[RMDB]
RNA sequence: GGGAACGACUCGAGUAGAGUCGAAAAUCCUCCCGAUUCCGAUAUCCCUUCCCCCGAGAGGUCCCCCAGGAAUGGCGGGACCCCACUCUACAGGGUCCGCGUUCCAUCCUUUCUUACCUGAUGGCCGACAGAGGCUUCUUCGGAAGCCUCAAAAGAAACAACAACAACAAC
Reactivity to 2A3 in 0.01 (KOAc 150mM, MgCl2 10mM, bicine 150mM(pH8.5), 24C), signal-to-noise 3, nucleotides 027 to 129: u040c000c000u010c010c000c000g060a110u080u030c010c020g070a020u030a070u090c010c010c010u070u040c040c000c000c000c010g000a010g000a020g020g000u000c000c000c000c020c010a000g010g040a050a050u040g250g060c070g020g000g020a000c000c000c000c010a040c020u080c030u080a060c060a040g020g000g000u000c000c000g050c040g020u040u000c010c000a010u040c030c000u000u120u050c000u090u030a050c010c000u000g020a060u080g030g020c020c000g010a020c010a070
Reactivity to DMS in 0.01 (KOAc 150mM, MgCl2 10mM, bicine 150mM(pH8.5), 24C), signal-to-noise 3, nucleotides 027 to 129: u040c040c080u020c060c000c000g020a130u070u010c030c030g010a100u030a120u010c000c000c000u010u080c000c010c000c000c000g020a110g030a100g000g000u000c030c020c020c000c070a030g000g000a010a000u060g030g090c160g030g030g030a030c000c000c010c010a060c120u040c000u050a150c150a120g020g000g120u030c010c050g010c050g020u010u060c000c030a080u010c000c100u010u010u040c060u020u010a060c000c050u000g060a100u000g020g010c040c010g040a130c130a000
Conditions: 150 mM KOAc, 10 mM MgCl2 and 150 mM bicine (pH 8.5), 24 C. Chemical mapping of a 170-nucleotide RNA with 2A3 and DMS. For 2A3, 5,025 sequencing reads were counted. For DMS the reverse transcriptase was MarathonRT.